[RMDB]
RNA sequence: GGGAACGACUCGAGUAGAGUCGAAAACGCAACAGGGGCAAGACCAGGAGGCCAGUCAUGUUUUUCGAUAAUGUGGUGUUUGCCGGGGUGUUGACGGUCGGCCUCAUGGUCGUGUUUUUCGCAGGCUGCAUAGCAUCUGAUUCGUCAGAUGCUAUGCAAAAGAAACAACAACAACAAC
Reactivity to 2A3 in 0.01 (KOAc 150mM, MgCl2 10mM, bicine 150mM(pH8.5), 24C), signal-to-noise 5, nucleotides 027 to 126: c090g010c080a050a090c010a110g020g000g030g040c020a050a070g010a010c010c000a000g030g000a000g000g010c000c020a000g030u010c010a010u020g110u030u050u040u110u090c140g070a130u110a200a050u090g020u040g040g010u020g040u060u110u150g010c010c020g000g000g010g060u100g020u020u070g050a020c020g010g060u090c050g010g000c000c000u000c000a000u010g000g000u000c000g010u000g000u000u040u010u020u060c020g010c070a030g110g030c030u030
Reactivity to DMS in 0.01 (KOAc 150mM, MgCl2 10mM, bicine 150mM(pH8.5), 24C), signal-to-noise 2, nucleotides 027 to 126: c110g000c100a070a070c080a080g020g000g000g020c050a050a090g010a020c000c010a000g000g010a020g040g000c000c020a220g000u000c010a090u010g000u020u000u000u000u050c240g000a110u040a030a030u030g030u010g010g000u020g010u020u010u040g040c000c090g000g020g000g000u020g000u000u000g010a050c010g000g030u000c160g030g000c010c000u000c010a020u000g000g000u000c010g010u000g010u000u000u000u030u030c050g000c080a080g000g020c060u010

Chemical mapping of a 177-nucleotide RNA with 2A3 and DMS.
2A3 adducts were read by reverse transcription with SuperScript II with manganese.
Conditions: 150 mM KOAc, 10 mM MgCl2 and 150 mM bicine (pH 8.5), 24 C.
2A3 is a SHAPE reagent: it acylates the 2'-hydroxyl of flexible nucleotides of all four kinds.
Reactivities are given for positions 27 through 126.
It was measured as part of the RMDB libraries RFM100 and RFMREP.